[RMDB]
RNA sequence: GGGAACGACUCGAGUAGAGUCGAAAAGAUAUGGAACGAAUCACCGAACUACAUCUGAGGGUCGGAAACGACCCGAAAGAUGCGGUGACUAUUCCUAAGUCAAAAGACACUCGUUCGCGAGUGUCAACACCCAUUUGUACUUCGGUACAAAUGGGUGAAAAGAAACAACAACAACAAC
Reactivity to DMS in 0.01 (KOAc 150mM, MgCl2 10mM, bicine 150mM(pH8.5), 24C), signal-to-noise 2, nucleotides 027 to 126: g030a050u000a300u000g000g010a000a010c130g010a080a170u000c010a010c010c020g000a080a020c110u030a300c000a000u010c000u000g000a300g000g010g000u000c020g000g000a030a030a280c000g030a000c020c000c000g000a060a040a000g010a010u010g000c020g020g010u010g000a030c060u000a300u000u000c000c000u010a060a170g010u020c020a130a090a100a090g000a020c000a000c000u000c010g010u010u030c250g010c030g000a010g010u000g000u000c030a040a170
Reactivity to 2A3 in 0.01 (KOAc 150mM, MgCl2 10mM, bicine 150mM(pH8.5), 24C), signal-to-noise 2, nucleotides 027 to 126: g040a010u060a020u190g000g020a020a040c040g080a170a300u020c010a010c030c010g000a060a050c130u170a040c300a000u000c000u030g010a100g020g010g020u000c010g010g030a020a050a010c030g030a000c000c000c040g040a010a010a000g000a000u000g000c000g000g000u020g000a000c010u040a030u040u000c000c020u030a100a080g080u050c020a040a040a050a160g010a000c010a010c000u000c000g040u030u050c260g020c020g120a000g000u020g000u000c000a000a000
The record gives the reactivity of an RNA of 177 nucleotides to DMS and 2A3. The DMS profile rests on 1,152 reads. The reactions ran in a buffer of 150 mM KOAc, 10 mM MgCl2 and 150 mM bicine (pH 8.5), at 24 C. For DMS the reverse transcriptase was MarathonRT.